This 177-nucleotide RNA was probed chemically with DMS. Source: RMDB library OK2TRN, as collected in RNAgym. DMS adducts were read by reverse transcription with MarathonRT. The DMS profile rests on 746 reads. Reactivities are given for positions 27 through 126.
RNA sequence: GGGAACGACUCGAGUAGAGUCGAAAAGAGCGACUUAAUAUUAGAUCGUCGCGAUCUAAAUAGUCCGACACGCUGUCGCGGGGCAGCACCUCCCGGGAAAGGGCCCUUGGUUCGGAUUCGAAAGAAAAGUCAUCAUGCUAUUCGUAGCAUGAUGACUAAAAGAAACAACAACAACAAC
Reactivity to DMS in 0.01 (KOAc 150mM, MgCl2 10mM, bicine 150mM(pH8.5), 24C), signal-to-noise 1, nucleotides 027 to 126: g010a150g010c170g010a030c030u000u060a040a220u030a150u000u000a000g000a010u000c020g030u030c300g000c160g000a010u000c010u010a000a020a050u000a030g020u000c010c000g060a130c060a070c150g030c060u000g020u000c000g040c220g010g000g000g000c030a020g030c050a230c080c060u000c040c000c020g000g000g000a010a060a120g000g000g000c070c070c000u010u000g010g000u000u000c020g010g000a120u000u010c070g010a040a060a100g000a040a130a020